[RMDB]
RNA sequence: GGGAACGACUCGAGUAGAGUCGAAAAAGGGGAUGUCAUCGCCGCCGAAUCUGCUCGUGGGACAUCCCCUUCGAUGCUCCACUCGCCCCAAUCCGUCCUCCUCUCCUUGUUGCGGCACCCCCCUUCGUGACGUCCUAUCAUUCGUGAUAGGACGUCAAAAAGAAACAACAACAACAAC
Reactivity to DMS in 0.01 (KOAc 150mM, MgCl2 10mM, bicine 150mM(pH8.5), 24C), signal-to-noise 1, nucleotides 027 to 126: a050g000g030g000g000a000u000g010u020c020a090u040c010g010c000c140g050c060c220g040a000a130u010c140u060g000c000u020c230g010u010g010g000g020a030c000a010u000c010c010c000c010u000u000c010g000a150u020g000c030u000c000c020a060c020u000c030g000c070c010c000c050a090a090u060c030c000g010u000c060c000u000c050c000u000c000u000c040c060u010u000g000u040u000g020c050g000g000c000a150c000c010c000c010c020c000u030u010c160g000
Reactivity to 2A3 in 0.01 (KOAc 150mM, MgCl2 10mM, bicine 150mM(pH8.5), 24C), signal-to-noise 1, nucleotides 027 to 126: a000g000g000g010g000a000u010g000u020c000a190u090c200g040c040c000g000c020c010g070a070a110u070c060u120g050c070u070c040g000u090g040g020g000a000c000a000u000c010c010c010c000u000u010c000g010a010u030g000c010u030c000c020a040c030u010c070g030c010c010c060c000a000a050u080c050c020g010u010c000c000u010c000c000u020c000u020c000c030u020u090g010u070u120g000c010g020g020c000a000c000c000c000c000c000c000u000u100c060g020